[RMDB]
RNA sequence: GGGAACGACUCGAGUAGAGUCGAAAAGCACUAGAGGGCGUAACGGCUGGGUGUAACCCAACACUAGGUGUGCUGAUUAGCGGGCUUGACUCCGUAACAAAUAGGCACUGGUGGUAAAAAGCAUCCCUGACCAUAUACAUCUUCGGAUGUAUAUGAACCGACAAUUUAGGUUCGCCUAAAUUGUCGGAAAAGAAACAACAACAACAAC
Reactivity to 2A3 in 0.01 (KOAc 150mM, MgCl2 10mM, bicine 150mM(pH8.5), 24C), signal-to-noise 2, nucleotides 027 to 156: g000c020a010c090u070a100g040a100g090g020g000c030g050u060a050a030c050g100g000c040u050g010g040g000u080g000u100a080a060c000c000c000a020a020c090a010c020u060a030g060g000u050g020u050g100c010u020g010a130u050u050a010g020c000g020g030g010c060u110u160g050a080c030u010c040c010g000u000a000a000c010a020a110a030u130a060g020g020c000a010c050u050g010g000u000g010g020u070a070a060a020a000a000g000c000a040u040c000c010c010u030g100a060c060c000a010u010a000u010a020c000a010u000c000u020u030c050g100g000a000u010g000u000a010u000a000u000g000a000a050
Reactivity to DMS in 0.01 (KOAc 150mM, MgCl2 10mM, bicine 150mM(pH8.5), 24C), signal-to-noise 1, nucleotides 027 to 156: g000c060a130c060u000a000g000a030g010g000g060c060g010u020a090a090c040g000g030c040u010g000g080g020u000g030u010a140a300c000c030c020a120a040c020a070c040u000a120g040g030u000g010u000g030c000u010g000a090u000u000a160g020c060g000g010g050c050u020u000g000a110c040u020c000c030g000u010a070a050c080a100a030a100u010a070g000g020c030a090c050u000g010g000u000g010g010u030a040a020a070a040a200g040c040a100u010c020c000c010u000g000a170c190c000a020u000a010u010a010c010a000u000c010u000u010c300g050g000a040u000g040u000a000u000a000u000g010a070a140